[RMDB]
RNA sequence: GGGAACGACUCGAGUAGAGUCGAAAACGAUAAGCAUUCGUGCUUAUCGACGGUACGAAAGUACAUAGGAGCAAAAGCAUCGGCUCCUAAAAACGAUGCAAAAGACAACGGGGUUCGCCCCGUUGAAGUCUCACCUAUAAUUCGUUAUAGGUGAGACAAAAGAAACAACAACAACAAC
Reactivity to 2A3 in 0.01 (KOAc 150mM, MgCl2 10mM, bicine 150mM(pH8.5), 24C), signal-to-noise 5, nucleotides 027 to 126: c010g000a000u000a010a000g000c010a010u020u150c210g100u040g000c000u000u000a000u000c000g000a020c070g070g000u000a000c000g030a180a030a030g020u010a010c030a080u180a120g000g010a000g000c020a050a110a150a060g000c000a020u000c010g010g000c000u010c010c080u030a030a010a000a000a000c000g000a000u000g000c000a050a020a040a080g120a040c000a000a000c000g000g010g010g030u040u060c170g100c010c000c010c000g000u000u000g000a020a000
Reactivity to DMS in 0.01 (KOAc 150mM, MgCl2 10mM, bicine 150mM(pH8.5), 24C), signal-to-noise 4, nucleotides 027 to 126: c010g000a000u000a000a000g020c010a030u000u020c160g030u000g020c000u000u000a000u000c010g010a090c240g000g010u000a000c010g010a150a090a160g010u000a000c010a130u010a120g000g000a010g020c000a080a060a080a120g000c000a010u000c010g030g010c000u010c000c010u020a000a010a010a010a030c010g020a010u000g000c010a080a090a130a150g010a180c000a010a010c000g010g000g010g020u000u010c250g010c000c000c000c000g000u000u000g000a040a060